[RMDB]
RNA sequence: GGGAACGACUCGAGUAGAGUCGAAAAAUCGGUGCGGAGAAAAAGGAAGGAGGACGAGGAAGGCCUGCAACUGCUCAGGCAGUUGGACCUCGAACAAACGCGCGCGACAGGCACUGACCAGUCCUGGGAGCAUUAUUAUGUUCGCAUAAUAAUGCUCAAAAGAAACAACAACAACAAC
Reactivity to DMS in 0.01 (KOAc 150mM, MgCl2 10mM, bicine 150mM(pH8.5), 24C), signal-to-noise 7, nucleotides 027 to 126: a080u010c030g010g020u000g030c020g010g010a080g000a040a060a040a110a090g010g000a060a090g010g010a080g010g010a130c040g000a080g010g010a300a060g020g000c030c040u000g000c000a030a010c020u000g000c010u000c240a150g010g010c000a020g000u000u000g000g010a080c080c010u000c030g000a070a080c170a070a090a100c090g000c070g000c100g000c040g000a100c050a070g000g000c050a060c030u000g000a090c070c050a120g000u000c020c010u000g010g000
Reactivity to 2A3 in 0.01 (KOAc 150mM, MgCl2 10mM, bicine 150mM(pH8.5), 24C), signal-to-noise 8, nucleotides 027 to 126: a000u060c050g000g000u040g010c030g030g040a050g080a090a070a040a040a030g130g020a040a040g060g060a030g010g020a010c020g020a070g030g030a080a020g040g020c000c010u030g010c010a030a020c010u010g010c010u030c140a100g180g000c000a000g010u010u000g020g030a060c000c010u010c040g030a070a010c040a060a110a020c050g020c010g000c000g000c000g060a030c000a030g010g010c030a050c150u040g040a120c010c020a010g040u020c000c010u040g040g070

Description
Chemical mapping of a 177-nucleotide RNA with DMS and 2A3. For DMS the reverse transcriptase was MarathonRT. It was measured as part of the RMDB library OK1LIB. The DMS profile rests on 19,106 reads. The reactions ran in a buffer of 150 mM KOAc, 10 mM MgCl2 and 150 mM bicine (pH 8.5), at 24 C.